Background:
The record gives the reactivity of an RNA of 177 nucleotides to DMS and 2A3.
RNA sequence: GGGAACGACUCGAGUAGAGUCGAAAACCAAGAGGAAUGAGCCUCGCCAACAGCAGCCGUUUACGGCUGGAAAGGGGAAAAACAAAGCGCAGGGCAAUGGGGUUUGGUAGGAACUUUUUUCGAAGAAAACAUGAGGUAGGUUCGCCUACCUCAUGUUAAAAGAAACAACAACAACAAC
Reactivity to DMS in 0.01 (KOAc 150mM, MgCl2 10mM, bicine 150mM(pH8.5), 24C), signal-to-noise 3, nucleotides 027 to 126: c010c010a120a090g030a040g010g000a170a070u010g000a130g000c020c000u000c030g000c080c030a040a090c150a100g000c020a000g010c080c000g040u020u010u020a050c010g010g000c050u000g010g000a030a040a100g000g000g000g000a030a040a040a070a090c110a050a060a050g000c030g020c060a040g000g000g000c040a060a080u030g000g000g000g010u020u000u000g010g000u010a050g010g010a040a050c060u000u000u000u010u020u000c060g010a090a080g010a100a080
Reactivity to 2A3 in 0.01 (KOAc 150mM, MgCl2 10mM, bicine 150mM(pH8.5), 24C), signal-to-noise 1, nucleotides 027 to 126: c010c000a140a030g060a020g110g020a080a020u250g010a050g010c000c000u000c010g030c050c030a090a070c000a080g040c000a000g000c000c000g010u080u150u250a120c060g000g000c000u000g000g030a120a080a010g040g000g000g020a020a020a020a000a000c070a050a140a000g010c110g000c000a040g000g020g000c030a000a080u040g010g030g000g000u050u080u110g090g020u000a100g060g000a070a100c040u090u040u010u010u000u070c080g080a110a070g050a130a150
About this RNA
The data come from the RNA Mapping Database (RMDB), libraries RFM100 and RFMREP. Values cover nucleotides 27 to 126.